[RMDB]
RNA sequence: GGGAACGACUCGAGUAGAGUCGAAAACAAUCUCAGGAAGAUAUGCUACAAGAUUUAGGAUACGGAUAUAUAGGAGACACUAUUAGGACAUUCUUCAAAGAGAACACGGAAAUCCGUCCACGAGAUAAAAGCAUUUUAACUUUAGAAGAAGUGGAUACUCAUGUGAAAUAUUCGUAUUUCACAUGAGAAAAGAAACAACAACAACAAC
Reactivity to DMS in 0.01 (KOAc 150mM, MgCl2 10mM, bicine 150mM(pH8.5), 24C), signal-to-noise 2, nucleotides 027 to 156: c000a120a130u000c050u000c010a230g030g020a160a090g020a090u000a020u000g000c010u000a140c100a120a080g000a110u000u000u000a080g010g010a150u000a090c060g000g010a080u000a130u010a060u000a120g010g010a070g030a100c040a050c040u010a100u000u000a130g000g000a040c050a070u000u000c020u000u010c020a020a110a130g010a070g020a040a080c030a080c050g010g000a050a090a120u000c040c040g020u000c030c010a040c000g000a140g020a170u000a020a080a070a040g030c040a090u000u000u000u000a060a110c020u000u000u000a120g000a060a080g020a060a170g020u000g000g020a080u000a130
Reactivity to 2A3 in 0.01 (KOAc 150mM, MgCl2 10mM, bicine 150mM(pH8.5), 24C), signal-to-noise 4, nucleotides 027 to 156: c010a020a070u010c010u020c020a030g020g070a000a030g020a040u060a020u100g020c000u040a090c030a100a070g030a180u060u160u190a070g010g010a050u070a150c030g000g020a010u030a010u030a000u030a160g070g030a020g060a020c040a010c090u080a060u100u160a040g030g020a020c020a050u010u020c010u020u030c040a070a130a000g070a010g010a030a020c080a010c100g020g020a080a040a040u000c010c000g000u010c020c000a050c060g070a100g000a040u090a070a120a000a000g000c010a000u020u000u040u170a050a040c010u010u040u060a040g010a100a000g030a080a030g030u010g040g020a010u050a050
An RNA of 207 nucleotides, treated with DMS and 2A3 and read out base by base.
The DMS profile rests on 3,216 reads.
For 2A3 the reverse transcriptase was SuperScript II with manganese.